RNA sequence: GGGAACGACUCGAGUAGAGUCGAAAAGUCGCCUCGCCCGAGAGGACGACGAACACCUCCUCCUGAUCCGGGUGGGCGUGAGCCGCACCGCUGAACCGCUCGCCCGGCUCGAGGGCGUACUGGACGAUAUUAAAAUGCGAUUCGUCGCAUUUUAAUAAAAAGAAACAACAACAACAAC
Reactivity to DMS in 0.01 (KOAc 150mM, MgCl2 10mM, bicine 150mM(pH8.5), 24C), signal-to-noise 9, nucleotides 027 to 126: g010u000c010g010c010c010u000c010g010c070c060c050g010a210g000a050g000g010a090c020g010a020c040g010a090a100c150a140c030c020u000c010c010u000c010c060u010g000a070u010c010c010g010g010g030u000g000g000g010c010g020u000g010a070g010c020c110g000c170a100c170c130g000c020u000g010a100a180c260c010g010c010u000c000g000c010c000c000g000g000c010u000c060g000a040g000g000g000c070g020u010a070c110u010g010g010a110c100g010a190
Reactivity to 2A3 in 0.01 (KOAc 150mM, MgCl2 10mM, bicine 150mM(pH8.5), 24C), signal-to-noise 5, nucleotides 027 to 126: g000u010c000g010c010c000u000c020g050c020c140c060g140a140g000a000g150g010a300c000g000a020c020g010a050a020c030a050c010c010u030c010c000u010c000c040u080g030a080u030c000c010g000g000g000u010g010g000g000c020g020u070g030a020g020c010c060g060c120a110c030c070g000c030u020g040a070a040c020c010g000c020u000c000g020c030c010c010g000g000c000u000c000g000a020g000g010g020c060g010u100a100c110u140g110g070a040c060g020a010